Record summary
An RNA of 207 nucleotides, treated with 2A3 and read out base by base. Source: RMDB library OK3TST, as collected in RNAgym. For 2A3, 608 sequencing reads were counted. The RNA was probed in 150 mM KOAc, 10 mM MgCl2 and 150 mM bicine (pH 8.5) at 24 C. 2A3 adducts were read by reverse transcription with SuperScript II with manganese.
RNA sequence: GGGAACGACUCGAGUAGAGUCGAAAAGCGCUCCGUUCAUAAGGAUACUUACGAGGAAGAGAAAGUGGCCGAGAAAGCAGCUUCGUGUAUUUCCUCGAGUUCUGCCACCGGAUCCAAAGAGACGGAUCUGAAAGACACGAUUUAUCCCCAGAGGGUACGAUACCUAGGCAUUCGUGCCUAGGUAUCGAAAAGAAACAACAACAACAAC
Reactivity to 2A3 in 0.01 (KOAc 150mM, MgCl2 10mM, bicine 150mM(pH8.5), 24C), signal-to-noise 1, nucleotides 027 to 156: g110c050g030c090u010c000c050g020u040u060c030a050u040a230a110g010g020a040u040a090c030u070u020a030c060g030a010g020g000a010a050g040a020g050a180a080a010g090u040g000g000c060c070g000a020g140a060a090a000g040c030a000g000c010u070u000c070g020u070g020u050a110u030u030u040c000c000u030c070g000a000g000u030u000c010u030g000c030c010a030c010c010g010g000a030u030c030c030a000a100a140g100a020g040a070c120g040g020a030u000c000u010g070a160a030a000g050a040c020a000c040g020a000u000u000u210a050u060c010c060c070c010a020g050a120g070g020g010u070a020